[RMDB]
RNA sequence: GGGAACGACUCGAGUAGAGUCGAAAAGAAACAAUCAAGGGUAUCAUGGACGCAGGCCAACGAGGCAUCGGCGUAUCUGAGCGCUUCCUUCUUGUUCGUGAGGAACCUCUUUUAGGUACUCGUAUCCUUUGCGAUGAAAAUGGUGAUGCACUGUAUACGGGUAGAUCAAAUUCGUUUGAUCUACCCGAAAAGAAACAACAACAACAAC
Reactivity to DMS in 0.01 (KOAc 150mM, MgCl2 10mM, bicine 150mM(pH8.5), 24C), signal-to-noise 1, nucleotides 027 to 156: g020a170a110a090c070a110a060u010c080a060a030g040g000g010u000a050u000c060a100u020g020g000a070c070g040c010a090g000g020c030c070a110a130c100g000a130g020g020c070a120u000c010g030g000c000g040u000a030u000c080u000g020a090g040c060g000c070u000u000c000c030u000u000c060u000u010g000u000u000c150g010u010g000a060g040g010a080a050c020c000u000c020u000u000u000u000a040g010g000u000a010c000u000c000g000u000a120u000c020c010u000u000u000g040c060g000a100u000g020a050a040a090a110u000g020g060u000g020a090u000g020c030a050c000u030g000u010a150u000a140
Reactivity to 2A3 in 0.01 (KOAc 150mM, MgCl2 10mM, bicine 150mM(pH8.5), 24C), signal-to-noise 2, nucleotides 027 to 156: g090a000a060a000c070a000a100u120c060a050a100g020g020g020u060a010u060c050a060u130g040g050a010c030g000c090a030g010g030c010c030a080a040c070g040a040g020g030c030a070u070c080g010g000c050g000u020a050u030c040u050g040a010g000c090g020c030u010u020c000c010u020u020c020u030u190g110u180u110c020g050u090g030a000g010g010a000a040c060c020u050c000u040u070u070u210a020g010g000u040a010c000u010c040g030u080a150u070c010c000u080u080u060g030c030g000a030u130g140a020a020a060a060u100g000g010u060g010a050u050g000c020a030c030u040g040u010a020u000a110

Conditions: 150 mM KOAc, 10 mM MgCl2 and 150 mM bicine (pH 8.5), 24 C. Structure probing data (DMS and 2A3) for a 207-nucleotide construct. For DMS the reverse transcriptase was MarathonRT. For 2A3, 1,205 sequencing reads were counted. It was measured as part of the RMDB library OK3TST.